[RMDB]
RNA sequence: GGGAACGACUCGAGUAGAGUCGAAAAGAUGAGCUGGAAGGUUUGGAGGCUGUAGCUGGAGAGAGGCUCAAAAUUCAGAUUUUGGAGGUGGUGGUGUGGUUUCCAGUGAUGACAAUGUCCAUGCCACAACCACUGGCUGAGCAGCUGAGUAGUAGAAUAAAGGUAUGGUAUUCGUACCAUACCUUUAAAAAGAAACAACAACAACAAC
Reactivity to 2A3 in 0.01 (KOAc 150mM, MgCl2 10mM, bicine 150mM(pH8.5), 24C), signal-to-noise 4, nucleotides 027 to 156: g030a040u090g010a000g020c030u020g020g010a060a030g080g000u050u090u080g060g010a020g030g000c040u050g050u100a010g010c030u030g020g000a020g000a010g010a000g020g000c020u030c050a040a060a010a020u130u050c020a030g070a150u050u100u120u210g050g010a090g010g010u070g010g030u000g010g010u010g000u020g010g040u060u020u070c060c040a080g020u040g090a090u110g020a030c060a130a080u090g020u050c010c010a010u030g000c010c000a020c010a020a040c000c000a000c020u000g020g010c010u010g010a010g010c000a000g010c030u040g010a010g030u070a010g010u070a020g150a080a030
Reactivity to DMS in 0.01 (KOAc 150mM, MgCl2 10mM, bicine 150mM(pH8.5), 24C), signal-to-noise 4, nucleotides 027 to 156: g000a120u010g000a110g030c030u000g020g030a080a110g010g020u010u010u000g030g020a100g020g020c040u000g020u010a060g010c040u010g020g020a120g020a140g010a090g040g010c020u000c050a040a060a080a130u000u010c060a080g000a180u000u000u000u000g030g010a140g030g030u000g000g050u000g000g020u020g040u000g020g020u020u010u000c050c020a110g030u000g010a190u000g010a110c060a060a070u010g010u010c010c000a070u000g000c020c010a040c010a040a040c030c020a060c030u010g000g010c040u000g000a080g010c070a080g020c040u000g000a150g020u000a110g020u000a090g010a090a240
Source: RMDB library OK3TST, as collected in RNAgym.
Chemical mapping of a 207-nucleotide RNA with 2A3 and DMS.
The RNA was probed in 150 mM KOAc, 10 mM MgCl2 and 150 mM bicine (pH 8.5) at 24 C.
Values cover nucleotides 27 to 156.
For 2A3, 2,907 sequencing reads were counted.